Structure probing data (2A3 and DMS) for a 177-nucleotide construct.
Reactivities are given for positions 27 through 126.
The RNA was probed in 150 mM KOAc, 10 mM MgCl2 and 150 mM bicine (pH 8.5) at 24 C.
DMS adducts were read by reverse transcription with MarathonRT.
The data come from the RNA Mapping Database (RMDB), library OK1LIB.
RNA sequence: GGGAACGACUCGAGUAGAGUCGAAAAUACGACCUAAAUUCCGUCAUCGUUGCUUGGAAUGAUAACAUCAUUUUUCGAUGGCACUUGUGGGUUGUCUGCCACGGCUCGAUGUUGCGGUGCUAAAAAGCACCCGACCUAUAUUCGUAUAGGUCGGGUGAAAAGAAACAACAACAACAAC
Reactivity to 2A3 in 0.01 (KOAc 150mM, MgCl2 10mM, bicine 150mM(pH8.5), 24C), signal-to-noise 9, nucleotides 027 to 126: u160a030c040g050a050c010c010u050a070a080a090u160u030c060c030g020u020c020a020u010c020g090u070u110g050c060u070u130g050g040a070a050u060g030a030u060a070a070c050a110u050c010a020u020u020u040u120u120c090g040a080u070g060g020c070a040c090u080u100g030u110g080g050g010u060u040g010u050c030u050g050c000c010a080c080g010g000c010u010c020g050a040u050g020u060u070g010c010g010g020u020g000c020u070a100a070a040a030a010g060
Reactivity to DMS in 0.01 (KOAc 150mM, MgCl2 10mM, bicine 150mM(pH8.5), 24C), signal-to-noise 6, nucleotides 027 to 126: u050a080c160g030a040c000c000u000a080a070a060u010u010c070c060g020u010c010a030u010c050g010u020u020g040c170u050u050g000g020a050a020u000g000a030u000a050a080c040a300u010c000a030u010u000u000u010u000c050g010a060u020g010g000c050a060c130u000u000g010u000g000g000g020u010u000g000u000c070u010g000c070c000a070c110g000g000c020u000c040g020a060u010g020u020u020g000c300g000g020u010g000c050u010a030a040a060a110a080g010